RNA sequence: GGGAACGACUCGAGUAGAGUCGAAAAAUUUGCGAUGAAUCGCAGCAAGUACGUCAGGGACUUAUUGAUCUCGUAGAUGAAAUAGGUAGUCACGAUGCGGAGAUUUUAAAAUUGCACUGCAACAUUACCAGGAUCAUCCAUUCGUGGAUGAUCCUGGAAAAGAAACAACAACAACAAC
Reactivity to DMS in 0.01 (KOAc 150mM, MgCl2 10mM, bicine 150mM(pH8.5), 24C), signal-to-noise 1, nucleotides 027 to 126: a090u020u000u000g060c050g000a020u010g020a150a070u020c030g060c080a060g000c100a060a070g020u010a030c020g000u020c120a080g040g010g000a060c010u000u000a050u000u010g000a050u010c040u020c160g000u010a060g000a020u000g010a050a020a020u040a150g020g020u000a060g000u000c070a060c040g010a120u020g000c040g030g000a300g000a090u000u000u050u010a030a080a040a160u020u000g010c090a100c160u000g000c120a010a100c060a040u000u000a150
Reactivity to 2A3 in 0.01 (KOAc 150mM, MgCl2 10mM, bicine 150mM(pH8.5), 24C), signal-to-noise 1, nucleotides 027 to 126: a020u040u090u020g030c030g000a030u090g160a160a220u080c020g000c020a000g000c050a000a060g100u000a040c030g020u050c040a070g060g060g060a000c010u050u050a050u190u160g040a050u000c040u000c050g030u030a030g000a080u140g060a020a020a020u030a000g040g000u020a010g040u040c090a000c100g040a010u010g060c000g010g110a050g040a040u160u090u160u300a050a080a060a100u090u040g050c130a110c090u080g000c010a000a030c010a120u010u110a130